[RMDB]
RNA sequence: GGGAACGACUCGAGUAGAGUCGAAAAACGAGGUACGCCUCGAAAAUAUGACCGGUGUCAUAGCCUCUAGCACACAGAGGGCGCGUGGGUUCAACUCCCCCCCUUUUCCGAGGGUAUCGGAAACCAAAAAACACAAUUUGGUUCGCCAAAUUGUGAACGCAAAUAAGCUGUUCGCAGCUUAUUUGCGAAAAGAAACAACAACAACAAC
Reactivity to 2A3 in 0.01 (KOAc 150mM, MgCl2 10mM, bicine 150mM(pH8.5), 24C), signal-to-noise 1, nucleotides 027 to 156: a000c000g000a000g000g010u040a000c200g060c010c000u000c020g020a080a010a030a040u110a090u100g000a020c020c040g050g030u080g050u130c090a090u060a120g080c000c000u000c010u010a050g100c080a040c000a000c030a150g010a010g020g050g000c010g000c010g090u210g050g120g000u130u200c070a030a080c090u020c000c000c000c000c000c000c030u020u020u020u010c000c000g000a000g010g000g010u050a000u030c000g000g000a000a000a000c020c010a030a000a100a020a060a020c000a000c000a000a000u000u000u000g030g000u010u010c150g060c030c000a000a000a000u000u020g000u000g010a000a000

Structure probing data (2A3) for a 207-nucleotide construct. The RNA was probed in 150 mM KOAc, 10 mM MgCl2 and 150 mM bicine (pH 8.5) at 24 C. For 2A3, 774 sequencing reads were counted. It was measured as part of the RMDB library M2RFPK. Reactivities are given for positions 27 through 156.